[RMDB]
RNA sequence: GGGAACGACUCGAGUAGAGUCGAAAACUCUGGAGCUUAGUGGUGAAGCAUGGGAAGUAAAGAAGUCUUUCAAGCGCAUGCAAUGUGGAAGGACGCAGGACAAUGAGCAAUAGACACUCUUACAUAGCUAUACAACGACAUUCGUGUCGUUGUAUAGAAAAGAAACAACAACAACAAC
Reactivity to 2A3 in 0.01 (KOAc 150mM, MgCl2 10mM, bicine 150mM(pH8.5), 24C), signal-to-noise 6, nucleotides 027 to 126: c040u040c030u030g050g020a060g020c010u020u080a040g020u070g110g020u060g050a050a020g000c020a040u050g040g000g020a070a030g020u110a050a040a040g090a090a010g060u020c030u000u090u040c050a100a050g040c040g010c050a010u130g050c020a050a200u130g010u050g050g020a040a030g030g010a020c020g000c030a000g010g040a020c030a040a120u090g010a030g000c010a010a040u020a060g020a010c010a020c030u020c000u010u040a050c030a180u130a050g040
Reactivity to DMS in 0.01 (KOAc 150mM, MgCl2 10mM, bicine 150mM(pH8.5), 24C), signal-to-noise 9, nucleotides 027 to 126: c030u000c020u000g010g010a140g010c050u000u010a080g030u000g010g010u000g020a080a070g020c070a040u010g020g000g010a060a090g010u010a050a070a090g010a100a130g010u010c030u000u000u000c080a070a110g020c060g010c070a040u000g020c090a050a060u010g030u000g010g010a080a070g000g010a060c060g020c070a050g000g020a060c110a060a070u010g000a060g010c070a050a080u010a080g010a080c100a070c080u000c030u010u010a090c130a090u000a100g010

Chemical mapping of a 177-nucleotide RNA with 2A3 and DMS. The DMS profile rests on 12,716 reads. DMS adducts were read by reverse transcription with MarathonRT. The RNA was probed in 150 mM KOAc, 10 mM MgCl2 and 150 mM bicine (pH 8.5) at 24 C. For 2A3, 10,957 sequencing reads were counted. It was measured as part of the RMDB library OK2TRN.